[RMDB]
RNA sequence: GGGAACGACUCGAGUAGAGUCGAAAAGGUGAUUGUGAUACUCGCUACUGUCAUUCAUCGAAUGACAGUAUUAGAGUGCUACAAUCACAUUACGUGACUCAAUUAUUUAGCACUCUAAUUGAUAACAUAACGCGAGAUAUGUUAAAGUCACGUAUCGCCCAUAGGAGUGAUUCGUCACUCCUAUGGGAAAAGAAACAACAACAACAAC
Reactivity to DMS in 0.01 (KOAc 150mM, MgCl2 10mM, bicine 150mM(pH8.5), 24C), signal-to-noise 3, nucleotides 027 to 156: g040g020u000g000a010u000u010g040u000g000a070u000a050c010u010c000g030c240u000a050c000u010g020u000c010a000u000u000c000a250u020c240g010a010a010u000g000a050c000a010g010u000a000u010u000a080g030a030g030u000g020c010u000a000c010a030a020u000c000a020c010a080u010u000a020c030g060u000g000a040c000u000c020a080a140u000u000a090u000u000u000a140g020c000a120c090u000c070u000a060a080u000u000g000a240u010a120a100c110a080u010a040a090c160g000c040g010a120g000a120u000a020u000g000u000u000a040a090a070g000u000c000a010c010g020u000a040u000c100g020
Reactivity to 2A3 in 0.01 (KOAc 150mM, MgCl2 10mM, bicine 150mM(pH8.5), 24C), signal-to-noise 9, nucleotides 027 to 156: g120g000u000g000a000u000u000g000u010g020a030u030a030c000u000c000g020c020u010a000c000u000g000u000c000a000u010u000c040a170u150c290g020a010a000u000g000a000c000a000g020u000a000u000u030a010g000a000g000u000g000c010u010a000c000a000a000u000c000a000c010a010u010u040a000c000g010u000g010a000c000u020c090a060a100u100u050a070u110u170u120a080g040c050a030c060u050c010u030a020a050u030u080g100a090u080a150a020c020a040u090a070a030c070g020c060g090a040g040a120u030a020u050g060u010u080a160a120a000g000u000c000a000c000g000u010a030u070c060g010
Structure probing data (DMS and 2A3) for a 207-nucleotide construct. The RNA was probed in 150 mM KOAc, 10 mM MgCl2 and 150 mM bicine (pH 8.5) at 24 C. The 2A3 profile rests on 11,789 reads.